An RNA of 177 nucleotides, treated with 2A3 and DMS and read out base by base. The RNA was probed in 150 mM KOAc, 10 mM MgCl2 and 150 mM bicine (pH 8.5) at 24 C. Source: RMDB library OK1LIB, as collected in RNAgym.

[RMDB]
RNA sequence: GGGAACGACUCGAGUAGAGUCGAAAAUCAAUAGUACAAUCUUUACGAUGGACAUAUUGUGCUAGGAGUAUGAACAUGUACGUCAUGUUCAUACUCAUUUGUCUGUCCCGUAAAGUCGCAGACAGAAGAUAGUUUGCUGAUUCGUCAGUGAACUAUCAAAAGAAACAACAACAACAAC
Reactivity to 2A3 in 0.01 (KOAc 150mM, MgCl2 10mM, bicine 150mM(pH8.5), 24C), signal-to-noise 9, nucleotides 027 to 126: u120c040a020a110u050a080g050u050a050c040a040a080u040c040u030u090u040a050c060g120a170u180g040g020a010c020a030u230a060u090u150g070u110g050c020u040a040g090g000a000g000u000a000u000g000a000a000c010a000u010g030u120a070c220g130u090c130a000u000g000u000u000c000a000u000a000c000u000c000a000u000u010u010g010u000c020u010g010u000c000c010c000g020u040a040a030a020g040u040c050g020c070a030g040a130c010a030g100a120a010
Reactivity to DMS in 0.01 (KOAc 150mM, MgCl2 10mM, bicine 150mM(pH8.5), 24C), signal-to-noise 9, nucleotides 027 to 126: u050c070a080a090u020a020g010u010a030c050a050a030u010c060u010u020u010a060c080g010a130u020g000g010a070c090a070u030a070u010u010g010u010g010c030u000a020g000g010a020g000u000a000u000g000a010a000c010a010u000g010u030a140c280g020u030c010a000u000g010u000u010c000a000u000a000c000u000c000a010u010u010u000g010u010c030u000g000u000c040c050c000g010u020a040a050a050g010u020c150g000c050a050g010a040c040a060g010a120a110